[RMDB]
RNA sequence: GGGAACGACUCGAGUAGAGUCGAAAAGAUGAUGAUGCCCUUUAAAAUAAAUGUUGGCAUCUGUCUCCUGUUACUCAAAGUAGCAGACUGAUUCUUGGCUAGCGUUUAACCCUUGACCCUAGUUCUGCCUUCACCAGUGUCAAUCGAGAAAAAUGACGAGAACUAUAUGGUUCGCCAUAUAGUUCUCAAAAGAAACAACAACAACAAC
Reactivity to 2A3 in 0.01 (KOAc 150mM, MgCl2 10mM, bicine 150mM(pH8.5), 24C), signal-to-noise 6, nucleotides 027 to 156: g040a050u140g010a040u080g000a020u040g000c000c010c000u030u090u080a290a270a140a130u250a050a080a030u070g040u140u100g020g010c000a010u000c020u040g050u010c010u010c010c000u010g010u020u010a020c020u050c200a150a130a020g000u000a010g000c000a010g050a120c040u070g020a080u110u030c050u090u070g030g000c010u010a030g020c010g030u060u080u060a110a100c020c020c000u000u050g050a040c030c020c000u010a020g030u050u050c030u050g040c020c000u060u050c040a050c040c020a030g040u050g030u080c030a060a110u070c070g050a050g080a090a100a080a030a040u230g010a020c060
Reactivity to DMS in 0.01 (KOAc 150mM, MgCl2 10mM, bicine 150mM(pH8.5), 24C), signal-to-noise 2, nucleotides 027 to 156: g010a090u000g010a050u010g010a070u000g010c000c000c040u010u000u000a080a100a130a170u010a070a060a040u000g010u010u010g040g030c010a030u000c000u000g010u000c000u010c030c010u000g010u000u030a030c020u000c180a160a130a220g050u000a010g020c000a010g000a160c000u020g010a090u000u000c030u000u000g020g030c010u010a040g020c020g050u000u010u000a080a130c030c000c020u010u000g000a060c040c020c020u000a070g000u000u000c070u010g020c020c000u000u000c020a090c040c020a120g030u000g010u000c030a040a170u000c020g010a140g000a030a050a070a050a160u010g000a130c180
This 207-nucleotide RNA was probed chemically with 2A3 and DMS. Reactivities are given for positions 27 through 156. High 2A3 reactivity points to a flexible backbone, as in loops and unpaired stretches. For DMS, 4,924 sequencing reads were counted. The RNA was probed in 150 mM KOAc, 10 mM MgCl2 and 150 mM bicine (pH 8.5) at 24 C. 2A3 adducts were read by reverse transcription with SuperScript II with manganese.